[RMDB]
RNA sequence: GGGAACGACUCGAGUAGAGUCGAAAACUCACUGCCGCUCUGAGCGCAGUUACUGGCCAGAUUAGCGCGAAAAUUAUCAUCGUUAUUAGUAGGUUAACUCUCAUUCUCUUCUCCUGUCUGCGUCACCGUCUACACGGAAAUUCGUUUCCGUGUAGACAAAAGAAACAACAACAACAAC
Reactivity to DMS in 0.01 (KOAc 150mM, MgCl2 10mM, bicine 150mM(pH8.5), 24C), signal-to-noise 3, nucleotides 027 to 126: c030u000c020a090c110u010g020c070c070g040c020u000c060u010g010a090g000c020g030c010a050g000u000u000a060c110u000g020g010c040c030a100g000a090u010u000a060g010c060g010c070g000a070a040a050a090u000u000a080u000c050a070u000c080g020u010u000a090u000u010a080g030u000a060g000g020u000u000a030a100c070u000c020u000c040a090u000u000c040u000c010u000u000c020u000c020c020u000g000u000c030u000g010c100g010u000c060a140c140c080
Reactivity to 2A3 in 0.01 (KOAc 150mM, MgCl2 10mM, bicine 150mM(pH8.5), 24C), signal-to-noise 5, nucleotides 027 to 126: c000u010c000a040c030u020g080c080c050g070c020u050c130u180g150a080g060c050g000c060a000g000u000u020a090c040u050g030g000c010c010a020g010a140u080u080a040g020c040g000c020g090a050a040a020a020u210u120a090u100c060a020u040c040g060u070u050a060u080u060a070g110u030a020g010g130u070u080a050a040c010u020c000u000c030a070u090u010c040u000c000u060u010c010u010c000c000u020g020u040c010u010g030c030g020u030c020a020c070c010